[RMDB]
RNA sequence: GGGAACGACUCGAGUAGAGUCGAAAAGUACUUUUCGCCACGGGCACGCAGUUCAGCCAGAACUGUAUCGAUGCCUUUUUUAUCGAUUACACGCAUACCUUUAGCAGAUACGCGCAGGGUGACAAAAGUGGCAUUAGGAUUUCGAUCCUAAUGCCACAAAAGAAACAACAACAACAAC
Reactivity to DMS in 0.01 (KOAc 150mM, MgCl2 10mM, bicine 150mM(pH8.5), 24C), signal-to-noise 1, nucleotides 027 to 126: g010u000a040c100u010u010u020u000c090g020c010c050a130c190g060g020g000c030a030c050g010c000a000g020u010u000c010a100g000c240c290a230g000a020a000c000u000g030u010a030u010c100g020a140u000g000c010c070u030u010u040u000u000u010a100u010c060g010a070u000u020a090c140a100c000g010c030a060u000a080c030c020u010u000u020a150g000c130a020g010a080u000a020c100g010c020g000c060a170g000g020g010u020g010a070c130a030a010a040a120

Conditions: 150 mM KOAc, 10 mM MgCl2 and 150 mM bicine (pH 8.5), 24 C. This 177-nucleotide RNA was probed chemically with DMS. For DMS the reverse transcriptase was MarathonRT. Reactivities are rounded to 0.1 and cut off at 0 and 3.